[RMDB]
RNA sequence: GGGAACGACUCGAGUAGAGUCGAAAACAUUAAUUUAUUGUCGUUAAUGUGGAAUUAGACGGAAAUUGCUAUUUAAUAUGUGCAUGUUCAGCAUUAGAAAUCAAGCGAGCUGUGGAAGCAGUAAUUACGUACUACGGGAAUUCGUUCCCGUAGUACGAAAAGAAACAACAACAACAAC
Reactivity to DMS in 0.01 (KOAc 150mM, MgCl2 10mM, bicine 150mM(pH8.5), 24C), signal-to-noise 3, nucleotides 027 to 126: c040a030u000u010a020a050u000u000u000a100u000u010g000u000c140g010u000u000a010a040u010g020u000g020g020a150a090u000u010a090g020a090c080g010g000a060a070a050u000u000g000c030u000a060u000u000u010a060a080u010a040u000g010u000g030c040a040u010g010u000u010c110a100g000c040a040u000u000a090g000a060a050a080u010c130a050a110g000c090g000a070g010c010u010g010u000g010g020a110a100g010c020a030g000u000a050a040u000u000a090
Reactivity to 2A3 in 0.01 (KOAc 150mM, MgCl2 10mM, bicine 150mM(pH8.5), 24C), signal-to-noise 3, nucleotides 027 to 126: c020a010u080u090a040a060u090u090u230a230u160u170g120u090c040g000u010u010a040a000u050g020u040g010g030a110a040u070u050a130g040a040c050g060g050a080a080a070u090u040g010c040u030a030u080u080u060a170a130u140a030u210g030u010g050c050a030u020g100u060u070c030a020g010c000a020u010u060a030g070a050a070a010u150c090a060a000g090c050g030a020g000c010u010g010u020g070g010a070a020g000c000a000g000u030a020a150u110u050a040